[RMDB]
RNA sequence: GGGAACGACUCGAGUAGAGUCGAAAAUGCCGAUUGGCAAUCGAAGCUGUUGAGCCAGCAAUAAGCUGAUCACAGAUAGCUGGGGUGAAUACAGUGUUCAUCAAUAAUGACUGUGUCACCGUUGAACCAAAUUCUGCGGUGAGAUGCAUCGGAACCGCCGUAUGACGCCUUUCGAGGCGUCAUACGGAAAAGAAACAACAACAACAAC
Reactivity to 2A3 in 0.01 (KOAc 150mM, MgCl2 10mM, bicine 150mM(pH8.5), 24C), signal-to-noise 2, nucleotides 027 to 156: u140g030c050c050g090a140u130u240g150g030c090a040a050u040c030g030a070a000g040c000u000g020u110u140g050a070g100c170c020a040g030c030a020a160u250a060a030g000c000u000g000a000u090c060a050c000a100g060a040u160a080g040c040u070g000g000g030g050u030g040a070a030u070a060c040a050g070u030g080u160u090c060a110u050c050a100a050u120a150a060u170g040a000c000u000g000u000g010u040c000a000c000c000g040u000u080g030a030a050c130c000a050a030a100u110u050c040u040g040c010g020g000u010g030a030g000a000u040g010c010a010u040c050g030g000a000a000c020c030g030
Reactivity to DMS in 0.01 (KOAc 150mM, MgCl2 10mM, bicine 150mM(pH8.5), 24C), signal-to-noise 1, nucleotides 027 to 156: u000g040c130c000g000a170u000u010g000g120c030a180a050u000c070g010a130a130g020c020u000g000u010u030g000a250g000c030c020a070g000c000a060a090u040a020a160g010c010u000g000a090u000c040a090c010a200g030a110u000a050g040c020u000g030g000g040g000u000g000a000a000u000a070c020a200g010u000g010u000u000c060a110u020c100a220a100u000a180a020u030g020a090c060u000g000u000g020u000c020a040c020c030g000u000u000g060a110a140c070c170a030a070a300u000u000c030u000g000c090g000g000u000g000a040g000a030u000g010c000a070u000c020g000g000a140a050c000c000g010